[RMDB]
RNA sequence: GGGAACGACUCGAGUAGAGUCGAAAAGGGGUCCGACAUCGAUCGAAGAUUGUCAGCCACCACUGAAGCCUCCACGGUGGGAUGGCUUGGAUUUAUCUUCGGGAGUCGGACGGAGGCACCCAAAAGCUGCACUACCCUUUCGAGGGUAGUGCAGCAAGAUAUGACUGGUGUUCGCACCAGUCAUAUCAAAAGAAACAACAACAACAAC
Reactivity to 2A3 in 0.01 (KOAc 150mM, MgCl2 10mM, bicine 150mM(pH8.5), 24C), signal-to-noise 2, nucleotides 027 to 156: g090g000g000g010u010c010c000g030a000c000a050u300c010g020a010u010c000g000a020a000g010a030u060u120g170u140c000a000g000c000c010a020c000c000a000c010u020g050a120a020g000c000c010u250c000c280a030c010g000g030u010g000g100g140a290u180g030g000c010u060u140g110g010a040u060u180u150a100u040c000u000u020c020g000g000g000a030g000u000c000g000g020a000c020g000g000a000g010g000c000a030c000c010c000a040a140a030a030g010c000u010g000c000a000c000u020a010c010c010c030u050u060u140c290g040a030g010g000g000u000a000g000u000g040c000a000g010c000a010a000
Overview: Source: RMDB library RNAMAK, as collected in RNAgym. Structure probing data (2A3) for a 207-nucleotide construct. The 2A3 profile rests on 1,378 reads. The reactions ran in a buffer of 150 mM KOAc, 10 mM MgCl2 and 150 mM bicine (pH 8.5), at 24 C.